[RMDB]
RNA sequence: GGGAACGACUCGAGUAGAGUCGAAAAUUUACGAAUGAUGAAUUGUAAAAAUACGAUGUACUCUCGAGUCCUGAGUAGAAACAUUGAACUCAAACAUUGCUCAGUUGAGCGUGAGUUUAAGAUGAAGUAGUGUGUAAAAUUUCGAUUUUACACACUAAAAAGAAACAACAACAACAAC
Reactivity to DMS in 0.01 (KOAc 150mM, MgCl2 10mM, bicine 150mM(pH8.5), 24C), signal-to-noise 9, nucleotides 027 to 126: u000u000u000a010c010g010a030a040u010g010a170u040g010a160a050u000u010g000u000a000a010a010a050a140u010a300c010g000a010u000g000u040a080c030u000c000u000c000g000a020g010u000c000c100u010g010a140g020u010a070g010a120a070a070c080a100u010u000g000a000a010c000u000c000a030a050a080c200a120u030u020g010c000u000c000a260g020u020u040g000a010g010c000g010u000g000a010g000u000u000u000a010a030g000a090u010g010a100a080g010
Reactivity to 2A3 in 0.01 (KOAc 150mM, MgCl2 10mM, bicine 150mM(pH8.5), 24C), signal-to-noise 9, nucleotides 027 to 126: u010u000u000a010c020g120a020a020u070g100a050u130g040a080a140u050u020g010u010a000a000a010a020a020u140a040c000g000a010u060g040u160a140c010u000c000u000c010g000a000g000u000c000c010u070g020a050g050u140a040g110a070a070a000c030a040u010u040g010a010a000c000u000c000a020a070a040c090a190u130u190g000c000u010c020a270g130u200u230g170a000g000c010g010u010g000a000g000u000u000u020a070a060g030a070u090g040a070a020g100